[RMDB]
RNA sequence: GGGAACGACUCGAGUAGAGUCGAAAAGAAGCACGGCUUGUGUGUGAUCCUUUUGGAUUGCACUGUAUAUCCUACGCUGUGCGAAAGUAGGUCCAUUGUGGCGAGAGCCACUUACAGUACAGCUUAUUAUGACGCAUCGCUGUACGAACGAUGCAGACAUUUAAUCCUAGUUCGCUAGGAUUAAAUGAAAAGAAACAACAACAACAAC
Reactivity to 2A3 in 0.01 (KOAc 150mM, MgCl2 10mM, bicine 150mM(pH8.5), 24C), signal-to-noise 8, nucleotides 027 to 156: g090a050a000g000c010a000c010g020g010c040u120u120g070u000g000u000g010u020g130a000u010c020c010u100u170u160u300g010g000a010u000u000g000c000a000c000u000g060u030a190u020a020u100c010c010u050a030c070g010c010u010g000u000g000c000g010a030a020a010g140u190a030g010g090u030c070c040a100u070u150g000u000g000g020c020g010a060g010a000g030c000c010a000c000u010u070a050c020a010g010u010a010c000a010g000c010u070u050a050u150u110a130u280g100a060c070g010c070a030u060c040g000c020u020g020u070a010c020g010a060a010c050g010a010u060g020c020a010g010a050
Reactivity to DMS in 0.01 (KOAc 150mM, MgCl2 10mM, bicine 150mM(pH8.5), 24C), signal-to-noise 6, nucleotides 027 to 156: g010a150a180g000c010a040c030g020g020c020u010u010g020u010g030u000g050u000g010a010u000c000c000u010u000u000u020g040g010a020u000u000g010c000a000c000u000g010u000a110u010a120u000c100c050u000a110c110g020c010u000g020u000g020c030g000a070a060a150g040u000a080g000g020u000c050c050a170u010u000g010u000g010g030c020g010a300g000a300g020c000c010a040c010u000u000a050c070a170g010u010a050c050a080g010c030u000u000a110u010u000a140u010g000a150c110g020c020a050u000c050g020c020u010g040u010a130c110g010a040a040c020g010a080u000g000c010a140g010a210
This 207-nucleotide RNA was probed chemically with 2A3 and DMS. The DMS profile rests on 19,267 reads. Conditions: 150 mM KOAc, 10 mM MgCl2 and 150 mM bicine (pH 8.5), 24 C. Source: RMDB library OK3TST, as collected in RNAgym.